Conditions: 150 mM KOAc, 10 mM MgCl2 and 150 mM bicine (pH 8.5), 24 C. Chemical mapping of a 177-nucleotide RNA with 2A3 and DMS. For 2A3, 20,122 sequencing reads were counted. High 2A3 reactivity points to a flexible backbone, as in loops and unpaired stretches. The data come from the RNA Mapping Database (RMDB), library OK2TST. The DMS profile rests on 11,317 reads.

RNA sequence: GGGAACGACUCGAGUAGAGUCGAAAAUGUCCGCGCCGAAACCAUCGUCGCCGAAAGCGUGCUGCAUGACAUGGGUGCGAUCUCGAUGAUCGGCUCGGAUUCGCAGGCCAUGGGCCGCAUCGGCGAAGAGCGAUUAUUUAUUCGUAAAUAAUCGCUCAAAAGAAACAACAACAACAAC
Reactivity to 2A3 in 0.01 (KOAc 150mM, MgCl2 10mM, bicine 150mM(pH8.5), 24C), signal-to-noise 8, nucleotides 027 to 126: u160g020u010c010c010g010c010g000c010c020g070a110a050a040c050c010a110u120c070g080u010c010g020c010c000g060a090a070a020g030c020g090u210g020c040u060g040c040a180u190g090a080c000a030u030g030g000g020u060g020c000g000a010u010c160u080c070g070a100u120g040a080u100c040g050g030c040u010c000g010g000a020u050u010c010g000c010a020g090g100c000c010a040u050g030g020g000c010c000g000c010a030u040c000g010g000c010g000a050a010
Reactivity to DMS in 0.01 (KOAc 150mM, MgCl2 10mM, bicine 150mM(pH8.5), 24C), signal-to-noise 7, nucleotides 027 to 126: u010g000u000c010c020g010c130g020c010c010g010a070a110a140c160c060a060u010c120g010u000c020g010c010c000g000a050a070a130g030c010g010u010g010c020u010g020c080a060u020g010a230c020a190u010g010g000g010u000g010c010g010a030u000c030u000c070g010a050u010g000a110u010c050g010g000c070u000c010g010g010a060u000u000c020g010c020a060g010g010c010c000a040u000g010g010g020c010c010g020c020a100u000c020g000g000c020g020a060a080